[RMDB]
RNA sequence: GGGAACGACUCGAGUAGAGUCGAAAAGAUAUGGAGCACUACCCACCUCUUAGAUUCGAUGAACUACUUCGAAUACUCGGAAACGAGUAGUAGAAGCAUCGAAUCUAAGAGAGGUGCUCCUAAGUCAUCAAUGGACAAUGUUCGCAUUGUCCAUUGAAAAAGAAACAACAACAACAAC
Reactivity to DMS in 0.01 (KOAc 150mM, MgCl2 10mM, bicine 150mM(pH8.5), 24C), signal-to-noise 4, nucleotides 027 to 126: g000a130u020a150u020g020g000a010g030c010a010c010u000a150c020c020c030a300c120c000u010c000u000u010a000g000a040u010u000c000g010a020u000g000a140a030c090u020a300c010u000u010c010g030a250a300u000a010c000u000c000g010g010a120a110a270c020g020a020g020u010a000g010u020a300g000a010a010g000c000a000u000c000g000a020a010u000c010u010a000a000g000a000g030a010g000g000u000g000c010u000c000c020u010a000a110g010u010c160a140
Reactivity to 2A3 in 0.01 (KOAc 150mM, MgCl2 10mM, bicine 150mM(pH8.5), 24C), signal-to-noise 2, nucleotides 027 to 126: g080a040u270a190u300g000g000a000g030c000a030c030u270a300c030c000c010a040c010c000u000c000u000u000a000g010a000u020u000c000g000a010u020g010a130a130c070u280a070c020u300u000c030g110a300a030u020a030c000u000c020g010g060a090a130a080c020g000a000g000u010a000g010u040a020g020a020a020g000c000a000u000c010g000a000a000u030c000u000a000a000g000a000g020a000g000g030u000g010c020u000c000c000u000a010a020g100u050c070a080